[RMDB]
The record gives the reactivity of an RNA of 177 nucleotides to 2A3 and DMS.
For 2A3 the reverse transcriptase was SuperScript II with manganese.
Reactivities are rounded to 0.1 and cut off at 0 and 3.
DMS adducts were read by reverse transcription with MarathonRT.
The data come from the RNA Mapping Database (RMDB), library RFM100.
For DMS, 1,157 sequencing reads were counted.
Reactivities are given for positions 27 through 126.

RNA sequence: GGGAACGACUCGAGUAGAGUCGAAAAAACAAACAUCAAAUCGCAUAGCAAAGAGUCAAAAAAAUAGAGAGCUUUGCGAGACCUACCAAGGGUGAAGAGAUACCAUCCAAGGAGCUGAAGAGAAAUCGUGAAGGCAAAAUUUCGAUUUUGCCUUCACAAAAGAAACAACAACAACAAC
Reactivity to 2A3 in 0.01 (KOAc 150mM, MgCl2 10mM, bicine 150mM(pH8.5), 24C), signal-to-noise 2, nucleotides 027 to 126: a000a000c150a130a030a000c060a110u140c060a000a110a050u010c010g000c000a010u010a060g000c000a130a160a070g020a040g140u120c220a010a020a150a000a060a030a200u250a010g120a010g000a030g000c010u050u050u000g000c000g010a010g010a020c000c050u150a090c020c030a010a010g000g000g000u000g030a010a100g060a020g000a040u030a070c040c000a010u020c000c000a010a020g000g030a020g000c020u100g030a040a000g030a050g040a060a070a020u190c060
Reactivity to DMS in 0.01 (KOAc 150mM, MgCl2 10mM, bicine 150mM(pH8.5), 24C), signal-to-noise 2, nucleotides 027 to 126: a030a100c100a060a110a080c210a010u010c020a160a300a090u000c020g000c050a050u000a040g000c050a080a030a040g010a080g000u000c070a000a030a000a190a000a190a150u030a180g000a090g020a260g000c010u010u040u050g000c050g000a070g000a050c000c000u000a140c020c050a070a300g000g010g020u000g000a100a050g070a210g000a040u010a010c150c000a000u000c000c010a060a300g020g000a040g000c110u000g000a100a100g000a100g000a040a070a050u020c170